Structure probing data (2A3) for a 177-nucleotide construct. It was measured as part of the RMDB library OK1LIB.
RNA sequence: GGGAACGACUCGAGUAGAGUCGAAAAUCCCGUGCUUUUUGCCAGGCCUGUCAUUGAGGUAAAAAGCGGGCCUGAGUCCAACAUUAAAGCCUCCUCGCAACUUAUGAUAGCAGAAGACUCCUGCCUGCCUCAUGACCGGGUUCGCCCGGUCAUGAGGAAAAGAAACAACAACAACAAC
Reactivity to 2A3 in 0.01 (KOAc 150mM, MgCl2 10mM, bicine 150mM(pH8.5), 24C), signal-to-noise 1, nucleotides 027 to 126: u000c000c000c000g070u080g020c040u160u280u150u000u140g040c060c000a000g000g070c020c000u050g000u250c050a140u090u030g200a030g000g210u300a100a050a000a000a000g000c000g000g020g000c000c000u000g020a000g060u000c090c000a050a000c000a210u100u080a040a020a020g000c050c000u000c000c000u010c020g020c030a080a190c000u160u070a200u220g010a070u050a000g040c000a000g080a180a100g010a180c000u100c070c000u000g040c000c000u000g000